[RMDB]
RNA sequence: GGGAACGACUCGAGUAGAGUCGAAAACUGAGUUUAAAGGUGUGAUGGAAAGUCAGCAAUGAGUACGAGUGCUUAUGAACUCUGGAAGUCUUAGACAGUUGUCAGUGACAUCAAAAUCAUUUACAUGUAUCUUCCGUACAUUCGUGUACGGAAGAUAAAAAGAAACAACAACAACAAC
Reactivity to DMS in 0.01 (KOAc 150mM, MgCl2 10mM, bicine 150mM(pH8.5), 24C), signal-to-noise 5, nucleotides 027 to 126: c050u000g010a080g010u000u010u010a050a140a110g020g010u000g020u000g020a110u000g020g000a070a100a140g000u000c050a050g010c100a080a070u000g010a050g020u000a100c130g010a120g010u000g010c030u000u000a110u000g000a060a050c040u000c020u010g010g010a110a070g020u010c040u000u010a120g000a060c070a160g010u010u010g010u000c020a080g010u000g000a030c050a060u000c170a030a050a050a070u020c030a050u000u000u010a050c140a090u010g000
Reactivity to 2A3 in 0.01 (KOAc 150mM, MgCl2 10mM, bicine 150mM(pH8.5), 24C), signal-to-noise 2, nucleotides 027 to 126: c030u050g050a050g020u100u080u100a100a070a040g100g000u070g030u030g070a090u060g020g020a080a030a030g040u020c030a000g000c040a030a060u080g010a000g010u030a030c040g040a020g030u010g010c000u060u130a090u140g040a050a000c000u000c040u080g010g090a110a010g010u000c030u010u080a060g030a030c050a190g030u120u040g050u160c050a050g040u030g030a010c000a050u100c050a070a000a070a000u110c050a060u010u080u100a080c070a090u160g040
The record gives the reactivity of an RNA of 177 nucleotides to DMS and 2A3. Conditions: 150 mM KOAc, 10 mM MgCl2 and 150 mM bicine (pH 8.5), 24 C. For DMS the reverse transcriptase was MarathonRT. For 2A3, 1,615 sequencing reads were counted.